[RMDB]
RNA sequence: GGGAACGACUCGAGUAGAGUCGAAAACACGAAACGCCAAAAUGAUGAGAACACUGUUCAAGAACCGAUAUUUUUAGGAAGAGCCGGAAGAGGUAUGGCAGGGGACUUGAAUAAUAGAAGCUCCUGCGAGACAUUACCAAUUCGUUGGUAAUGUCUCAAAAGAAACAACAACAACAAC
Reactivity to 2A3 in 0.01 (KOAc 150mM, MgCl2 10mM, bicine 150mM(pH8.5), 24C), signal-to-noise 9, nucleotides 027 to 126: c070a000c020g110a090a110a020c060g010c030c050a050a040a050a070u190g090a040u060g010a020g040a090a010c090a020c130u110g030u080u060c040a060a050g040a080a030c010c000g010a010u020a110u150u110u040u050u080a050g030g030a020a060g010a020g030c030c030g020g030a070a040g040a030g070g030u120a070u120g100g000c000a010g010g000g010g040a070c000u010u040g060a060a050u150a170a020u080a110g120a060a010g010c000u000c010c000u010g000c010
Reactivity to DMS in 0.01 (KOAc 150mM, MgCl2 10mM, bicine 150mM(pH8.5), 24C), signal-to-noise 5, nucleotides 027 to 126: c060a070c120g020a050a060a090c080g020c020c060a040a050a100a060u020g010a100u010g000a110g010a040a060c070a070c110u030g010u000u000c040a090a120g010a120a110c060c020g010a040u010a040u000u000u010u010u010a090g000g010a050a090g000a110g010c050c030g000g000a060a030g010a070g010g010u000a030u020g010g010c000a010g000g010g000g000a070c020u000u000g000a120a080u030a110a070u020a110g000a080a050g010c010u000c010c010u000g000c060

This 177-nucleotide RNA was probed chemically with 2A3 and DMS.
The RNA was probed in 150 mM KOAc, 10 mM MgCl2 and 150 mM bicine (pH 8.5) at 24 C.
For DMS the reverse transcriptase was MarathonRT.
For 2A3 the reverse transcriptase was SuperScript II with manganese.